Structure probing data (DMS and 2A3) for a 177-nucleotide construct. For 2A3, 11,001 sequencing reads were counted. 2A3 adducts were read by reverse transcription with SuperScript II with manganese.
RNA sequence: GGGAACGACUCGAGUAGAGUCGAAAAGAUCCUAGACGGAUCGUGAUCGAGUCUAGGCACGACAUCCAUGCGGAUCGUACGUACCAUGCACGUACACUAGGAUCACUAGGUCUAGGUCUAGUGCUAGCGUGCCUGUAAAUUUCGAUUUACAGGCACGAAAAGAAACAACAACAACAAC
Reactivity to DMS in 0.01 (KOAc 150mM, MgCl2 10mM, bicine 150mM(pH8.5), 24C), signal-to-noise 7, nucleotides 027 to 126: g010a050u010c020c000u000a020g000a050c070g000g010a150u010c160g010u000g000a040u000c020g010a120g010u000c060u010a170g010g010c030a020c020g000a040c080a060u000c010c010a220u010g010c230g000g010a030u000c160g030u000a050c010g030u000a050c020c060a170u000g000c140a040c080g000u000a060c140a090c050u000a050g000g000a040u000c010a020c030u000a290g000g000u000c020u000a040g010g010u000c020u000a060g010u010g000c080u010a070g000
Reactivity to 2A3 in 0.01 (KOAc 150mM, MgCl2 10mM, bicine 150mM(pH8.5), 24C), signal-to-noise 6, nucleotides 027 to 126: g010a030u150c000c000u000a010g010a030c040g030g030a070u160c080g000u030g020a040u030c030g050a010g160u000c040u170a100g020g050c020a010c030g030a020c010a040u000c020c010a090u300g150c170g020g020a020u050c100g000u030a110c010g000u010a040c040c020a040u130g070c090a030c080g060u150a040c050a020c070u030a020g120g080a040u030c010a010c020u030a040g030g040u020c020u020a010g040g000u010c010u020a090g030u080g070c050u050a040g030